Conditions: 150 mM KOAc, 10 mM MgCl2 and 150 mM bicine (pH 8.5), 24 C. This 207-nucleotide RNA was probed chemically with DMS and 2A3. It was measured as part of the RMDB library OK3TST.
RNA sequence: GGGAACGACUCGAGUAGAGUCGAAAAAUAAGCAAGAGAUGACGAUGAGAGCAGUGCAAAAGGACCAACCAGGACAGCAUUGUCAGAAAGUAUAGGUGGAACUUCAGAGAAUCAAAAGGAGCUCAACUCAACUCUUUCCUUAGUUCACAACUCAUAGCCAGUUAGCAGAAUUCGUUCUGCUAACUGGAAAAGAAACAACAACAACAAC
Reactivity to DMS in 0.01 (KOAc 150mM, MgCl2 10mM, bicine 150mM(pH8.5), 24C), signal-to-noise 1, nucleotides 027 to 156: a150u030a160a120g030c110a100a110g010a120g000a080u000g030a010c070g000a140u000g010a150g030a230g010c080a050g020u030g020c000a070a060a080a090g030g010a130c030c010a060a130c110c060a130g000g020a110c020a070g050c050a090u010u000g050u010c060a200g000a070a080a060g030u000a080u030a030g010g000u010g000g020a060a110c120u000u030c070a050g030a160g000a110a110u000c100a130a040a160a030g000g030a000g000c030u030c000a030a010c210u010c030a050a060c050u000c000u000u020u000c010c060u000u010a050g000u000u000c000a040c000a010a300c040u000c000a090u000a300g000
Reactivity to 2A3 in 0.01 (KOAc 150mM, MgCl2 10mM, bicine 150mM(pH8.5), 24C), signal-to-noise 3, nucleotides 027 to 156: a000u120a020a010g030c040a030a000g020a000g000a080u090g020a030c050g040a050u090g040a040g000a010g110c010a030g030u080g100c060a090a110a050a000g020g010a030c030c020a050a030c020c030a040g050g090a020c020a010g030c050a060u040u070g050u090c010a000g150a080a100a000g070u090a020u080a120g030g000u010g040g010a020a000c030u030u020c050a010g040a000g040a260a070u120c100a120a060a050a070g080g000a050g010c020u030c100a020a070c010u010c050a020a110c000u000c000u040u020u060c000c030u040u020a020g000u080u090c030a010c040a200a110c050u100c120a040u090a080g040